[RMDB]
RNA sequence: GGGAACGACUCGAGUAGAGUCGAAAAGAUAUGGAGUGUCUAGUGGCUGAUGACCGUCCUCGGAAACGAGGACGCAAGGCUAACUAGAGCACUCCUAAGUCAAAAGUUGUGAGUUCGCUCACAACAAGAUAAUGGACUGCUUCGGCAGUCCAUUAUCAAAAGAAACAACAACAACAAC
Reactivity to DMS in 0.01 (KOAc 150mM, MgCl2 10mM, bicine 150mM(pH8.5), 24C), signal-to-noise 2, nucleotides 027 to 126: g020a030u000a300u030g030g020a050g050u020g000u000c000u010a030g000u010g010g030c010u000g000a290u020g010a150c300c020g000u000c010c010u010c000g010g000a130a120a220c010g020a000g000g000a010c010g000c060a030a120g010g040c000u000a030a040c000u000a030g000a080g030c000a020c000u000c000c000u000a020a080g000u000c020a100a080a230a160g010u000u000g000u010g000a040g050u020u000c250g010c020u000c000a000c010a000a010c000a120a070
Reactivity to 2A3 in 0.01 (KOAc 150mM, MgCl2 10mM, bicine 150mM(pH8.5), 24C), signal-to-noise 2, nucleotides 027 to 126: g080a010u130a040u180g000g010a000g030u010g000u050c000u020a000g000u010g050g000c040u020g100a300u170g010a150c120c000g010u020c010c000u050c000g050g100a080a060a050c040g010a000g010g000a010c000g070c010a030a030g000g000c010u070a270a050c000u000a000g080a050g060c000a000c000u000c000c000u000a110a000g040u000c000a000a020a050a270g040u040u050g010u000g000a020g010u020u270c300g020c110u000c010a000c000a010a000c010a020a020

Structure probing data (DMS and 2A3) for a 177-nucleotide construct. DMS adducts were read by reverse transcription with MarathonRT. The 2A3 profile rests on 2,259 reads.